The record gives the reactivity of an RNA of 177 nucleotides to DMS and 2A3. Source: RMDB library OK1LIB, as collected in RNAgym.
[RMDB]
RNA sequence: GGGAACGACUCGAGUAGAGUCGAAAAUGACCAUUUCUUUACCGGCUUUAAUGCCCGGGGAUAGAAAUCGAAGGCCAUACGGACAGCUAGGUCAAAUGCCGAAAAAGAACAAACAAACAAAAGAAAACGAGUAGGAGGACUUCGGUCCUUCUACUCGAAAAGAAACAACAACAACAAC
Reactivity to DMS in 0.01 (KOAc 150mM, MgCl2 10mM, bicine 150mM(pH8.5), 24C), signal-to-noise 2, nucleotides 027 to 126: u070g000a080c000c010a300u000u000u000c000u000u000u000a110c020c010g000g040c000u000u020u000a130a030u010g000c250c020c030g050g000g010g000a040u020a000g000a000a060a000u010c300g040a060a120g010g000c000c040a110u040a110c020g000g000a000c030a070g000c010u000a100g060g000u000c020a120a020a080u110g010c030c010g000a250a070a060a160a030g060a030a070c240a120a090a050c130a030a040a080c190a040a020a250a030g010a150a140a130a060
Reactivity to 2A3 in 0.01 (KOAc 150mM, MgCl2 10mM, bicine 150mM(pH8.5), 24C), signal-to-noise 6, nucleotides 027 to 126: u100g000a000c000c000a000u010u020u010c000u030u080u100a040c000c000g010g030c050u100u170u280a300a110u300g030c050c020c020g000g000g020g020a060u060a130g000a000a000a000u050c070g030a180a100g030g000c000c010a030u040a050c020g000g000a000c000a020g000c030u040a020g020g010u000c000a020a040a030u090g000c010c000g110a080a010a010a000a020g110a030a010c010a010a070a010c100a030a080a000c040a030a160a030a030g170a040a100a020a030